[RMDB]
RNA sequence: GGGAACGACUCGAGUAGAGUCGAAAAGAUAUGGAGGGAGAACGGUGAGGUUCGAAGGGUCGGAAACGACCCGUAGUUCACGGUUCGACGAUCUCCUAAGUCAAAGUUGACCCUUCGGGGUCAACAAGACCUCCUUAUCGUUCGCGAUAAGGAGGUCAAAAGAAACAACAACAACAAC
Reactivity to 2A3 in 0.01 (KOAc 150mM, MgCl2 10mM, bicine 150mM(pH8.5), 24C), signal-to-noise 1, nucleotides 027 to 126: g040a000u100a040u170g000g000a000g010g000g000a050g000a070a000c090g090g000u040g010a090g020g190u200u130c060g090a090a060g000g030g000u000c010g010g020a000a110a030c010g010a010c000c090c000g020u000a000g020u000u020c030a030c080g170g040u030u010c040g030a090c000g000a030u010c010u000c020c010u000a130a020g070u050c090a150a000a060g010u000u010g000a010c000c000c000u000u030c300g180g030g000g020u020c000a000a000c010a000a000
Reactivity to DMS in 0.01 (KOAc 150mM, MgCl2 10mM, bicine 150mM(pH8.5), 24C), signal-to-noise 2, nucleotides 027 to 126: g010a020u000a300u000g010g000a040g020g000g010a050g010a000a010c000g000g020u000g000a020g000g000u000u000c110g010a170a300g010g000g010u010c000g050g000a090a060a160c000g040a010c000c000c010g000u000a110g000u000u000c000a010c000g020g020u010u000c000g000a080c210g000a020u000c000u000c000c010u000a020a080g010u000c010a090a060a090g000u000u000g000a010c010c000c000u000u010c170g030g000g030g000u000c000a000a000c000a060a120

The data come from the RNA Mapping Database (RMDB), library TTRDEL. Chemical mapping of a 177-nucleotide RNA with 2A3 and DMS. 2A3 adducts were read by reverse transcription with SuperScript II with manganese.